[RMDB]
RNA sequence: GGGAACGACUCGAGUAGAGUCGAAAAUGAUGAACUUUAACAGGCAUCUGGUUCUUACUUCAGGACCAUCUCACCUAAAAUCGGCCACUCUUUCCCCUUAAAUAAGACAUCUCGAUGGACUAAUGACUAAUCAGCCCAUGCUCACACAUAACUGAGGCAUGACAACUUGGUUCGCCAAGUUGUCAUGAAAAGAAACAACAACAACAAC
Reactivity to DMS in 0.01 (KOAc 150mM, MgCl2 10mM, bicine 150mM(pH8.5), 24C), signal-to-noise 1, nucleotides 027 to 156: u020g040a070u010g020a070a090c080u000u000u000a100a160c150a090g010g010c010a040u000c020u000g000g000u000u000c000u010u010a090c140u000u000c140a140g030g000a070c030c020a060u000c020u000c010a040c030c030u000a040a020a050a060u020c010g040g010c000c010a100c040u000c030u000u000u000c000c000c000c090u000u000a030a040a080u000a050a060g000a090c030a100u000c010u000c020g030a200u010g000g010a070c040u020a050a090u000g010a130c100u010a070a110u000c030a060g020c030c000c020a070u000g010c030u000c030a020c050a070c090a100u010a060a130c050u010g000a100g040g000
Reactivity to 2A3 in 0.01 (KOAc 150mM, MgCl2 10mM, bicine 150mM(pH8.5), 24C), signal-to-noise 3, nucleotides 027 to 156: u090g020a020u040g010a050a160c040u090u090u140a110a040c080a050g000g030c020a020u000c060u080g000g020u030u000c010u090u130a210c090u060u170c060a020g020g020a010c000c010a050u010c060u030c040a100c030c040u070a070a050a020a050u050c000g060g000c030c010a070c020u110c050u050u080u010c030c000c010c000u060u120a130a070a020u120a090a010g050a010c020a070u040c050u000c090g060a050u060g060g000a020c010u050a120a050u030g050a030c040u100a040a090u070c030a020g010c000c000c030a020u080g040c010u000c010a020c000a000c000a120u120a130a020c020u020g000a010g050g000